Overview:
Chemical mapping of a 177-nucleotide RNA with 2A3 and DMS. For DMS the reverse transcriptase was MarathonRT. The reactions ran in a buffer of 150 mM KOAc, 10 mM MgCl2 and 150 mM bicine (pH 8.5), at 24 C.
RNA sequence: GGGAACGACUCGAGUAGAGUCGAAAAUCUGGACCGUUCGCGGUCCAGAAACUACCGAGAAAGCGACUCGGUAUAUAAACGCAACCCUUGGAAACAAGGGAACACUCUGCUGCUUCGGCAGCAGAAACACGGUAACAAGUUUCGACUUGUUACCGUGAAAAGAAACAACAACAACAAC
Reactivity to 2A3 in 0.01 (KOAc 150mM, MgCl2 10mM, bicine 150mM(pH8.5), 24C), signal-to-noise 1, nucleotides 027 to 126: u030c000u010g000g000a010c020c010g030u030u040c280g000c020g120g000u000c000c000a000g010a000a000a000c000u020a020c000c020g000a000g040a020a220a010g090c050g110a090c010u010c000g000g020u020a000u000a000u000a010a020a000c020g000c020a030a100c010c000c000u010u020g000g000a060a040a030c000a010a000g000g000g000a020a000c010a040c020u010c000u000g020c000u000g000c010u040u050c130g120g000c010a000g000c010a000g010a010a010a000
Reactivity to DMS in 0.01 (KOAc 150mM, MgCl2 10mM, bicine 150mM(pH8.5), 24C), signal-to-noise 2, nucleotides 027 to 126: u000c000u010g000g000a010c000c000g020u000u020c170g060c010g010g000u000c000c010a000g000a000a100a130c050u010a170c000c000g020a000g040a090a070a140g020c080g010a080c000u000c000g010g020u000a030u000a030u010a000a020a030c060g030c070a120a150c000c000c030u000u000g000g010a190a100a180c010a000a000g000g000g000a010a020c190a080c140u020c000u000g020c000u000g010c000u000u020c150g020g000c000a010g000c000a000g000a050a030a160